[RMDB]
RNA sequence: GGGAACGACUCGAGUAGAGUCGAAAACGCGAUGGAUACGUCCAUCGCGAAUCCGGCCUAGCCGCGGGCGUUAAACUGUGGCACGGUUGUGCCUAGGUGCAACCCUGCUACUAAUGGCGGUACCCCUGCCCAAGCUACCGUCUACGGACGGUAGCAAGAUGCCGUACGAUUUCGAUCGUACGGCAUCAAAAGAAACAACAACAACAAC
Reactivity to 2A3 in 0.01 (KOAc 150mM, MgCl2 10mM, bicine 150mM(pH8.5), 24C), signal-to-noise 2, nucleotides 027 to 156: c000g000c000g000a000u000g000g000a010u010a060c240g180u020c000c000a000u000c000g020c000g010a000a000u050c000c020g040g020c010c000u010a030g000c010c000g000c000g000g000g000c040g030u050u170a120a070a070c090u100g010u000g010g000c000a000c020g000g040u030u040g000u000g010c030c020u120a200g150g100u000g010c000a000a000c000c000c000u000g040c010u020a030c000u060a050a240u140g100g000c020g030g000u170a130c010c010c000c010u040g010c050c030c000a020a050g000c010u010a000c010c000g000u040c020u010a060c300g120g000a000c000g000g000u000a000g000c000a000a000